[RMDB]
RNA sequence: GGGAACGACUCGAGUAGAGUCGAAAAGAUAUGGACAUCGAAGAACACUUGCCAAUGAUGUCGGAAACGAUUGAGGCGGAGUGGGAGAUGUCCUAAGUCAAAAGCCAACACGUUCGCGUGUUGGCAACUGACUUAUAUGCUUCGGCAUAUAAGUCAGAAAAGAAACAACAACAACAAC
Reactivity to 2A3 in 0.01 (KOAc 150mM, MgCl2 10mM, bicine 150mM(pH8.5), 24C), signal-to-noise 4, nucleotides 027 to 126: g040a020u060a050u140g000g000a000c000a010u000c020g180a270a070g070a190a010c010a000c020u030u040g000c010c000a120a300u220g100a030u140g060u020c000g000g020a080a100a020c010g000a020u010u070g010a030g000g040c100g060g030a030g000u040g020g010g020a070g000a000u000g010u000c000c000u000a040a020g010u010c030a000a110a110a040g000c000c000a000a020c000a000c000g060u090u120c300g030c000g140u000g020u010u010g000g020c010a000a000
Reactivity to DMS in 0.01 (KOAc 150mM, MgCl2 10mM, bicine 150mM(pH8.5), 24C), signal-to-noise 4, nucleotides 027 to 126: g000a040u020a300u020g000g000a000c000a000u000c010g010a120a210g000a110a170c020a000c010u000u000g000c000c000a130a140u010g020a130u000g000u000c010g000g000a100a080a150c010g000a020u000u000g000a110g000g020c010g000g010a010g000u000g000g000g010a110g000a020u000g020u000c000c010u010a010a080g000u010c040a100a100a100a130g010c000c000a000a010c000a010c000g000u000u020c220g010c010g040u000g010u020u000g010g020c010a000a000